[RMDB]
Chemical mapping of a 207-nucleotide RNA with DMS and 2A3. For 2A3, 2,811 sequencing reads were counted.

RNA sequence: GGGAACGACUCGAGUAGAGUCGAAAAGGACAAAUUCCGUAACCGUGUGAGGCCAACAUCAAAGAUGCGUACCUAGCUGCGUUUCAACCUGCGUGGGUUGAGGCGGCUUAGCGGAUUAGGGCGUUCUGCCCCAGUGGUACCAUUACCCUAUGCAAAGGUACUCUGCUUAGUUCGCUAAGCAGAGUACAAAAGAAACAACAACAACAAC
Reactivity to DMS in 0.01 (KOAc 150mM, MgCl2 10mM, bicine 150mM(pH8.5), 24C), signal-to-noise 2, nucleotides 027 to 156: g020g000a100c070a060a100a210u000u000c020c000g010u010a030a060c020c000g020u000g070u000g010a080g030g090c030c030a070a060c050a050u000c030a140a130a140g010a070u000g010c040g000u000a140c020c000u000a100g020c040u000g000c030g000u000u000u000c000a000a030c000c020u020g050c300g050u010g030g030g030u000u000g060a040g000g020c050g010g000c000u000u000a050g010c070g060g030a250u010u000a030g040g000g020c010g040u010u000c070u020g010c020c000c030c040a070g010u020g010g000u000a090c010c040a130u010u000a100c020c010c040u000a180u010g000c120a080a190a150g000
Reactivity to 2A3 in 0.01 (KOAc 150mM, MgCl2 10mM, bicine 150mM(pH8.5), 24C), signal-to-noise 4, nucleotides 027 to 156: g110g000a040c070a050a120a040u150u030c040c030g030u060a030a110c040c030g020u030g020u040g100a060g010g030c030c040a060a020c050a130u120c090a060a070a050g040a020u050g060c020g020u050a110c000c000u000a010g000c000u040g010c020g020u030u040u040c000a000a000c000c000u140g110c180g200u300g020g000g000u000u010g000a010g020g020c050g010g000c000u010u070a000g000c000g030g010a020u080u130a030g020g000g000c030g080u220u060c070u200g010c000c000c000c000a060g060u070g090g000u020a030c000c000a010u030u070a050c010c020c040u080a090u120g070c070a090a020a020g080